[RMDB]
RNA sequence: GGGAACGACUCGAGUAGAGUCGAAAAAAGCCUAUCAGGAAGCUAUGGACUCUGGUGACACCUCACCACAAGUUCUUAAGGCUUUGCAGAAGGCUGUUAAUAUAGCUAAAAACGCCUAUGAGAAGGAAUAGCACGCUCUUCGGAGCGUGCAAAAGAAACAACAACAACAAC
Reactivity to DMS in 0.01 (KOAc 150mM, MgCl2 10mM, bicine 150mM(pH8.5), 24C), signal-to-noise 2, nucleotides 027 to 129: a000a000g020c030c000u000a150u030c000a100g000g000a030a060g000c000u010a190u000g000g000a000c020u000c300u000g000g030u020g000a060c260a210c100c280u000c020a010c000c040a040c300a060a000g010u040u000c030u030u010a090a130g000g040c020u010u000u030g000c070a080g030a080a020g050g020c030u020g060u100u000a040a070u030a000u030a000g030c140u020a050a050a050a110a070c260g030c010c060u000a020u000g000a040g030a120a020g030g020a060a020u040a120
Reactivity to 2A3 in 0.01 (KOAc 150mM, MgCl2 10mM, bicine 150mM(pH8.5), 24C), signal-to-noise 3, nucleotides 027 to 129: a000a000g010c010c000u050a150u050c040a050g040g070a000a000g000c010u080a090u150g000g000a010c000u000c050u030g000g080u000g050a020c050a040c090c150u110c000a000c000c000a010c060a000a000g000u010u000c000u060u060a170a080g100g000c000u000u000u000g050c050a120g000a030a020g000g000c000u020g020u000u020a070a000u080a070u080a000g060c110u210a070a100a000a010a020c010g020c010c000u080a100u140g100a100g070a090a030g040g020a100a000u030a020